[RMDB]
The data come from the RNA Mapping Database (RMDB), library M2RFPK. This 207-nucleotide RNA was probed chemically with DMS and 2A3. For 2A3 the reverse transcriptase was SuperScript II with manganese. The DMS profile rests on 2,919 reads. For 2A3, 1,385 sequencing reads were counted. For DMS the reverse transcriptase was MarathonRT.
RNA sequence: GGGAACGACUCGAGUAGAGUCGAAAAACCCCAGAAACCAUUCCUUAUACCUUGAGUAUUGCUGAAUUAAGUUUAGCGUGCAUGCUCUUGGCUAUUCUCAUAGUGAUUGUCAAAUUUGGAGUUACUUAAAACACGACACCCUUCGGGGUGUCGUGAACAAUUGAAUAGAGUUCGCUCUAUUCAAUUGAAAAGAAACAACAACAACAAC
Reactivity to DMS in 0.01 (KOAc 150mM, MgCl2 10mM, bicine 150mM(pH8.5), 24C), signal-to-noise 2, nucleotides 027 to 156: a070c030c000c000c050a140g030a090a110a060c030c020a140u000u000c030c020u000u000a250u000a050c000c010u000u010g040a070g010u000a040u020u000g040c020u000g000a050a070u000u000a080a190g000u000u000u000a030g010c050g040u000g020c090a170u010g020c000u000c010u000u000g000g030c030u000a110u000u000c030u000c030a160u010a080g010u020g010a060u000u010g030u000c030a050a120a220u000u000u000g010g010a270g000u010u000a060c050u020u010a040a100a100a250c010a010c010g020a010c020a000c000c000c000u000u000c300g070g040g040g070u000g010u000c000g010u000g000a000a040
Reactivity to 2A3 in 0.01 (KOAc 150mM, MgCl2 10mM, bicine 150mM(pH8.5), 24C), signal-to-noise 3, nucleotides 027 to 156: a020c050c020c000c000a040g150a050a060a010c060c000a090u060u090c030c010u100u070a040u020a120c000c010u020u020g000a000g010u030a020u210u140g000c010u040g070a140a150u150u140a200a120g160u120u050u120a040g020c020g020u020g030c020a010u020g000c000u000c000u010u020g000g000c010u040a020u110u080c080u030c040a170u130a070g060u080g120a090u090u060g070u090c070a060a050a140u100u090u190g050g010a050g020u060u010a060c020u040u120a020a020a070a080c010a000c010g000a010c020a000c030c000c010u020u060c220g020g000g000g010u000g000u000c020g000u000g000a000a000